[RMDB]
RNA sequence: GGGAACGACUCGAGUAGAGUCGAAAAGAUAUGGAAGGUAGGGAGUCCCGAGGUCGGAAACGACCUCCGGGACGAAGAACUACUUCCUAAGUCAGCGCGUAGCUGACUGUUCGCAGUCAGCUACGAAGUCUAACCGUAACUUCGGUUACGGUUAGACAAAAGAAACAACAACAACAAC
Reactivity to DMS in 0.01 (KOAc 150mM, MgCl2 10mM, bicine 150mM(pH8.5), 24C), signal-to-noise 2, nucleotides 027 to 126: g020a030u000a300u010g000g000a020a020g000g000u000a010g020g020g010a170g000u000c000c010c000g020a000g010g000u000c000g030g000a050a060a180c000g010a030c010c010u010c070c040g070g000g000a010c030g000a070a060g020a130a160c010u000a030c000u000u000c000c000u000a050a140g000u000c030a140g020c170g010c020g010u000a000g010c000u000g000a010c000u000g000u000u020c280g020c000a000g000u020c000a000g000c000u000a010c000g000a030a060
Reactivity to 2A3 in 0.01 (KOAc 150mM, MgCl2 10mM, bicine 150mM(pH8.5), 24C), signal-to-noise 1, nucleotides 027 to 126: g020a000u060a040u090g020g040a030a040g240g060u170a010g000g010g050a030g000u000c040c000c000g020a020g000g000u010c020g000g050a050a030a040c020g000a010c010c000u000c000c020g000g040g020a000c000g010a040a000g000a000a000c000u000a000c000u000u000c000c010u020a090a030g110u030c020a030g120c090g000c000g120u000a000g000c000u000g030a000c000u000g010u000u080c300g000c110a000g020u010c000a010g000c000u000a000c000g030a040a020